[RMDB]
RNA sequence: GGGAACGACUCGAGUAGAGUCGAAAAGAUAGAGUUUAAGGAGAUCACAGAAAGUGCAAAGGCACUGAAGCACCUCUUCUGAAUGGCAUCUUUAUCAGGAACUCGGGCCACUUUCAGGGUGGUGAUGCAACGUAGAAUGUUUCGACAUUCUACGUUGAAAAGAAACAACAACAACAAC
Reactivity to 2A3 in 0.01 (KOAc 150mM, MgCl2 10mM, bicine 150mM(pH8.5), 24C), signal-to-noise 2, nucleotides 027 to 126: g070a030u180a030g050a020g030u030u050u080a070a020g050g000a040g000a020u060c030a020c010a070g050a050a090a030g010u000g000c030a110a160a170g190g020c060a040c130u050g010a050a020g010c010a010c000c010u000c000u100u000c010u010g080a170a090u080g050g000c030a030u010c000u020u090u050a170u120c070a040g120g060a040a010c020u010c030g000g070g010c030c010a020c050u080u190u170c100a050g100g000g000u010g000g000u030g010a020u150g020
Reactivity to DMS in 0.01 (KOAc 150mM, MgCl2 10mM, bicine 150mM(pH8.5), 24C), signal-to-noise 9, nucleotides 027 to 126: g010a070u000a070g020a130g010u010u000u000a080a070g010g010a030g000a040u000c110a140c060a060g000a080a060a070g010u000g010c020a080a140a140g010g010c030a020c030u000g000a160a140g010c060a040c080c050u000c010u000u000c040u000g000a050a060u000g000g000c170a050u000c010u000u000u000a080u020c110a100g000g010a060a060c050u000c040g020g010g010c000c010a020c140u000u000u010c180a090g000g000g010u000g000g010u000g000a080u000g010
This 177-nucleotide RNA was probed chemically with 2A3 and DMS. 2A3 is a SHAPE reagent: it acylates the 2'-hydroxyl of flexible nucleotides of all four kinds. Values are in units of 0.01, from 0 to 300, in steps of 10. The RNA was probed in 150 mM KOAc, 10 mM MgCl2 and 150 mM bicine (pH 8.5) at 24 C. DMS adducts were read by reverse transcription with MarathonRT. The data come from the RNA Mapping Database (RMDB), library OK2TST.